[RMDB]
RNA sequence: GGGAACGACUCGAGUAGAGUCGAAAACUGUGCAGCUAGGCCCCUUGGAGGGCGGCAACGCCCGGGCCUCUGAGGUCCUGGAGCUGUCCUGCGGGCCCAGCGCUCAGAAGUGAUGAAUUGAUCAGAUGACGCUAAGAAGUUUCGACUUCUUAGCGUCAAAAGAAACAACAACAACAAC
Reactivity to DMS in 0.01 (KOAc 150mM, MgCl2 10mM, bicine 150mM(pH8.5), 24C), signal-to-noise 3, nucleotides 027 to 126: c010u000g010u000g000c030a120g030c000u000a100g000g000c040c010c030c300u020u010g010g010a000g010g010g000c000g020g060c010a110a080c300g000c070c000c060g000g030g000c000c020u000c200u030g000a060g010g030u010c020c000u000g010g010a110g000c010u000g020u000c000c000u000g020c080g000g000g030c000c000c000a010g000c000g000c000u000c000a010g000a110a100g020u020g000a130u000g000a160a160u070u010g000a160u000c030a020g010a300u000